[RMDB]
RNA sequence: GGGAACGACUCGAGUAGAGUCGAAAAGCAAAUAAGAUUUAGGGGAAGAAGAUGACAACCUUCUCGCGGUCUUCCCUGUUACGUGUGUAGACACAAUGAAUGUGAUCAAAACUAAAUAUACAAAAAACAUCCUACAUGUGUUCGCACAUGUAGGAUGAAAAGAAACAACAACAACAAC
Reactivity to 2A3 in 0.01 (KOAc 150mM, MgCl2 10mM, bicine 150mM(pH8.5), 24C), signal-to-noise 2, nucleotides 027 to 126: g100c050a090a070a080u240a190a100g060a130u100u080u210a040g060g020g020g000a040a010g030a060a020g070a110u140g040a030c030a040a100c030c000u000u000c000u010c000g120c030g010g010u020c000u030u000c000c000c030u030g050u070u150a080c120g010u050g000u010g050u110a060g000a130c000a000c000a060a040u210g080a170a120u060g120u000g040a210u020c000a050a070a000a120c000u080a020a000a100u190a030u040a040c000a000a050a000a060a060a000
Reactivity to DMS in 0.01 (KOAc 150mM, MgCl2 10mM, bicine 150mM(pH8.5), 24C), signal-to-noise 2, nucleotides 027 to 126: g000c130a050a050a120u010a080a050g000a130u000u010u020a100g020g000g010g000a040a070g000a120a070g010a060u000g000a090c100a030a090c100c040u000u000c010u000c030g000c060g000g020u000c000u000u000c000c000c000u020g000u000u000a020c240g010u000g020u000g010u000a130g000a040c010a010c030a030a140u010g000a090a090u000g030u020g000a060u000c020a040a100a180a090c110u010a010a030a030u010a050u000a020c070a000a050a160a050a030a090
Structure probing data (2A3 and DMS) for a 177-nucleotide construct. The data come from the RNA Mapping Database (RMDB), library M2PK90. For DMS the reverse transcriptase was MarathonRT.